[RMDB]
RNA sequence: GGGAACGACUCGAGUAGAGUCGAAAACACUAGAACGGAGGGAUCCGCAUGAGGCUGGUUUCACAGAGCAGUGAACACUUCCUUCUCUUGACAGUGGAGGGAUCACAGGCUGCAGUAUUCUCAGCCCAUAUGGCCUGGUGAGCCUAGCCAUUGAACCCCAUGUCAUAAGCUUCGGCUUAUGACAUGGAAAAGAAACAACAACAACAAC
Reactivity to 2A3 in 0.01 (KOAc 150mM, MgCl2 10mM, bicine 150mM(pH8.5), 24C), signal-to-noise 3, nucleotides 027 to 156: c070a040c040u150a040g090a140a030c020g030g020a000g060g060g030a050u050c030c040g080c090a030u100g010a070g060g000c010u020g000g010u040u130u180c080a050c010a020g090a030g080c010a020g030u010g020a040a010c070a060c100u020u040c000c000u070u080c010u000c030u080u190g160a160c090a060g040u030g010g010a000g000g000g010a000u030c040a020c030a030g010g000c000u010g000c020a010g010u100a140u220u060c080u010c020a000g010c050c000c000a010u070a090u080g070g020c010c010u090g050g090u040g010a000g000c000c030u030a010g010c010c030a030u030u050g070a040a060c000c000

The record gives the reactivity of an RNA of 207 nucleotides to 2A3. The RNA was probed in 150 mM KOAc, 10 mM MgCl2 and 150 mM bicine (pH 8.5) at 24 C.